[RMDB]
Conditions: 150 mM KOAc, 10 mM MgCl2 and 150 mM bicine (pH 8.5), 24 C. This 177-nucleotide RNA was probed chemically with DMS and 2A3. In probing experiments dimethyl sulfate is read out at A N1 and C N3, which are open when not base-paired.

RNA sequence: GGGAACGACUCGAGUAGAGUCGAAAAACAUCCGUACGCGGAUGAUGGGCGCUCGCUUCAAGUAAUCCAGGAUAGGCUGUAAUGUCUCCUGUCAGCCUUUUCUCGAUUACUUGGGACCAGAGCCAAAAUUCCUCAAGCAAUUCGUUGCUUGAGGAAUAAAAGAAACAACAACAACAAC
Reactivity to DMS in 0.01 (KOAc 150mM, MgCl2 10mM, bicine 150mM(pH8.5), 24C), signal-to-noise 3, nucleotides 027 to 126: a140c010a010u000c030c010g030u020a070c190g030c000g010g020a010u000g010a060u030g010g000g020c060g000c000u000c300g010c030u020u000c010a010a000g010u000a000a030u000c000c120a010g000g000a000u000a000g040g010c000u010g020u000a060a090u020g010u010c040u010c070c020u000g010u010c010a000g010c000c010u000u000u000u000c000u000c300g000a000u000u000a000c000u000u000g020g010g000a030c010c100a050g000a020g000c020c010a050a060a090
Reactivity to 2A3 in 0.01 (KOAc 150mM, MgCl2 10mM, bicine 150mM(pH8.5), 24C), signal-to-noise 6, nucleotides 027 to 126: a000c000a000u010c000c000g010u020a030c290g010c000g080g010a000u020g020a070u110g130g020g010c080g010c020u000c010g000c010u070u050c010a000a000g000u000a000a000u000c010c020a000g000g000a000u010a020g000g000c010u020g030u110a100a120u190g090u130c050u090c090c030u070g090u040c000a000g000c000c000u010u010u000u000c000u000c000g000a000u010u000a000c000u000u000g000g000g010a020c020c050a030g000a000g000c000c000a020a080a000